[RMDB]
RNA sequence: GGGAACGACUCGAGUAGAGUCGAAAACCUGCACGGUCAGCGAUCCGGCCGCCGAACUGAUCUUCGCCUGCUCGCCGAGCCCGAGCCGGGUCGCGUCGUCGGGAUGGAUCUGCAGGGUGCAGCGGUACAUACGUACUACUUUCGAGUAGUACGUAUGAAAAGAAACAACAACAACAAC
Reactivity to 2A3 in 0.01 (KOAc 150mM, MgCl2 10mM, bicine 150mM(pH8.5), 24C), signal-to-noise 6, nucleotides 027 to 126: c000c000u010g000c050a020c040g060g140u120c060a040g000c000g010a010u000c000c000g020g000c000c010g000c030c020g030a080a050c060u120g030a140u070c000u100u070c100g070c070c030u030g000c010u010c030g100c050c080g120a050g030c010c040c020g010a010g000c000c010g000g000g020u020c020g000c010g020u010c000g020u000c000g020g020g030a120u060g030g010a040u010c050u140g000c020a030g110g030g020u040g000c010a010g020c020g050g040u080a050
Reactivity to DMS in 0.01 (KOAc 150mM, MgCl2 10mM, bicine 150mM(pH8.5), 24C), signal-to-noise 9, nucleotides 027 to 126: c020c000u000g010c060a040c060g010g010u010c080a130g020c010g010a020u000c010c010g000g010c010c040g010c100c040g010a060a060c090u010g000a090u000c080u000u000c080g010c100c050u000g010c020u000c030g010c090c050g000a120g010c080c230c020g000a090g010c020c030g000g000g010u000c010g020c090g010u000c040g010u000c030g010g000g010a130u010g010g000a040u000c020u000g030c020a080g000g000g010u000g010c030a030g010c050g000g000u010a180